This 177-nucleotide RNA was probed chemically with DMS and 2A3. It was measured as part of the RMDB library OK1LIB. The RNA was probed in 150 mM KOAc, 10 mM MgCl2 and 150 mM bicine (pH 8.5) at 24 C.

RNA sequence: GGGAACGACUCGAGUAGAGUCGAAAAGGAGUGGAGGAAUCGGAGCAUUAAUCCUCAGAUUAUUCCCAACUAGUAGAAUAAUCUUCAAUAGUCUUCUGGACUUAACAGGUGAAGAUUUGAGAGGCUGGUGGAGUAUUCUGUUCGCAGAAUACUCCACAAAAGAAACAACAACAACAAC
Reactivity to DMS in 0.01 (KOAc 150mM, MgCl2 10mM, bicine 150mM(pH8.5), 24C), signal-to-noise 2, nucleotides 027 to 126: g000g040a120g000u050g000g000a010g000g050a030a030u010c030g020g000a130g000c150a110u030u020a080a090u000c200c010u000c030a070g010a100u010u010a100u000u000c000c030c000a130a110c110u080a040g040u040a030g000a120a060u030a000a020u020c000u000u010c010a060a060u010a040g020u000c000u000u010c230u020g000g000a020c040u000u030a010a060c260a150g010g030u010g010a000a020g000a000u000u010u000g010a240g010a040g020g000c090u010g020
Reactivity to 2A3 in 0.01 (KOAc 150mM, MgCl2 10mM, bicine 150mM(pH8.5), 24C), signal-to-noise 3, nucleotides 027 to 126: g190g070a060g020u170g090g080a050g020g050a030a030u070c030g070g070a040g020c000a000u050u120a050a120u130c000c000u010c000a020g000a020u020u140a040u060u060c020c010c030a040a040c070u050a010g140u010a020g090a170a040u130a080a020u000c000u020u020c050a060a090u030a110g000u000c000u130u050c110u230g120g000a080c000u100u080a140a020c030a090g060g060u020g030a000a000g010a020u000u000u010g040a110g020a030g090g090c050u090g010